Annotation
This 177-nucleotide RNA was probed chemically with 2A3 and DMS. It was measured as part of the RMDB library OK2TRN.

RNA sequence: GGGAACGACUCGAGUAGAGUCGAAAACGCAGCGCUACGACAUCGCGCUGUGGCGCAAGCUGCUGUAUCCGUUCGCGGUGUUCGUGAUGCUCGUGCUGUCGCUGCCGUUCGCGUACCUGCACACGCACGUGGACCCGCAGUUCGCUGCGGGUCCACGAAAAGAAACAACAACAACAAC
Reactivity to 2A3 in 0.01 (KOAc 150mM, MgCl2 10mM, bicine 150mM(pH8.5), 24C), signal-to-noise 1, nucleotides 027 to 126: c000g000c010a000g000c010g070c020u170a010c050g070a020c040a070u020c060g000c000g070c040u000g030u010g010g010c010g000c000a060a000g000c020u040g000c030u040g060u170a070u090c020c050g020u000u050c200g020c000g060g050u050g020u120u160c000g020u000g010a070u030g010c110u040c040g040u040g070c100u120g140u230c000g000c060u010g040c040c020g010u040u060c070g010c040g040u090a030c020c020u030g000c050a020c000a030c010g060c000a040
Reactivity to DMS in 0.01 (KOAc 150mM, MgCl2 10mM, bicine 150mM(pH8.5), 24C), signal-to-noise 1, nucleotides 027 to 126: c140g000c030a000g000c000g030c110u010a010c050g000a030c010a020u000c000g000c010g010c090u000g000u000g020g010c000g020c270a100a150g000c000u000g020c020u010g000u010a060u010c090c050g020u000u020c110g010c040g000g010u000g000u000u000c010g010u000g010a060u000g020c060u010c040g000u000g000c030u020g010u010c060g020c000u000g000c060c060g000u000u030c130g010c040g020u010a060c060c050u000g000c030a100c160a040c160g010c040a090

For 2A3, 1,662 sequencing reads were counted. Conditions: 150 mM KOAc, 10 mM MgCl2 and 150 mM bicine (pH 8.5), 24 C.